[RMDB]
Record summary:
The record gives the reactivity of an RNA of 177 nucleotides to DMS and 2A3. Values cover nucleotides 27 to 126. The RNA was probed in 150 mM KOAc, 10 mM MgCl2 and 150 mM bicine (pH 8.5) at 24 C. The data come from the RNA Mapping Database (RMDB), library 15KREP. For 2A3, 1,189 sequencing reads were counted.
RNA sequence: GGGAACGACUCGAGUAGAGUCGAAAAUGACUAAUCAUAGUUUCAGUGUGCAAAAACACAUUGGCGCUCCAGCAAACUUGCGUGUUGUUGGUCAUGCCAUGCAAGGCACUCUUUUGAAGUUGACUGUUCGUAUUACACUGUUCGCAGUGUAAUACGAAAAAGAAACAACAACAACAAC
Reactivity to DMS in 0.01 (KOAc 150mM, MgCl2 10mM, bicine 150mM(pH8.5), 24C), signal-to-noise 1, nucleotides 027 to 126: u000g010a080c030u000a050a060u000c050a130u010a060g000u000u000u000c040a010g010u010g000u010g020c070a030a120a010a160a250c100a030c030a070u010u000g030g010c020g020c020u000c050c040a040g000c000a030a060a010c010u000u000g010c180g030u000g020u000u000g000u000u000g000g010u010c030a060u000g020c090c010a020u010g000c060a130a090g020g020c100a050c080u010c040u000u010u000u000g020a070a140g020u010u010g000a200c130u000g030u020
Reactivity to 2A3 in 0.01 (KOAc 150mM, MgCl2 10mM, bicine 150mM(pH8.5), 24C), signal-to-noise 2, nucleotides 027 to 126: u050g040a010c000u050a030a190u080c030a110u030a130g030u040u000u090c040a000g020u000g000u000g000c020a000a050a010a100a080c020a020c000a030u000u080g030g030c020g030c020u000c010c010a020g000c000a000a060a080c020u130u260g070c050g050u140g020u060u040g000u010u010g060g010u010c030a030u070g000c030c000a000u120g000c040a030a040g040g050c000a020c040u070c000u140u200u080u130g100a090a040g060u040u020g090a080c020u060g000u030